Chemical mapping of a 177-nucleotide RNA with DMS and 2A3. DMS (dimethyl sulfate) methylates the pairing face of unpaired adenines and cytosines. The RNA was probed in 150 mM KOAc, 10 mM MgCl2 and 150 mM bicine (pH 8.5) at 24 C. It was measured as part of the RMDB library 15KREP. For DMS the reverse transcriptase was MarathonRT.
[RMDB]
RNA sequence: GGGAACGACUCGAGUAGAGUCGAAAACUUCCUUCUGAGAAGAGGAGACAGCUUGCCGCUCGCCCCCAGACCCGAGAUGAGCCUCGUGCCGAGGAGAGGCCGGAGACGGAGAGGCAGGAGGUCCCGAGUCUAAUCUAGAGUUCGCUCUAGAUUAGACAAAAGAAACAACAACAACAAC
Reactivity to DMS in 0.01 (KOAc 150mM, MgCl2 10mM, bicine 150mM(pH8.5), 24C), signal-to-noise 2, nucleotides 027 to 126: c180u000u000c020c030u010u010c030u000g000a210g010a120a060g010a070g000g000a090g010a100c050a050g000c030u000u000g000c000c040g030c030u000c040g000c030c000c010c010c020a160g020a070c050c010c010g000a150g020a120u010g000a120g010c020c000u000c060g000u000g020c110c060g000a060g030g010a140g000a090g000g010c020c030g010g020a080g010a110c090g000g010a040g010a060g000g010c040a020g000g010a040g010g020u010c000c020c000g010a100
Reactivity to 2A3 in 0.01 (KOAc 150mM, MgCl2 10mM, bicine 150mM(pH8.5), 24C), signal-to-noise 1, nucleotides 027 to 126: c010u040u000c010c010u040u080c070u080g110a140g020a100a020g040a050g050g040a110g000a050c020a020g010c000u050u030g040c000c000g060c060u040c010g100c020c010c000c000c000a010g010a080c000c000c000g040a040g010a100u100g050a030g030c030c030u010c040g020u060g090c010c010g010a030g040g020a040g000a010g000g030c000c000g000g000a070g000a020c020g050g000a040g000a000g020g000c010a010g000g010a000g000g030u010c000c010c000g000a030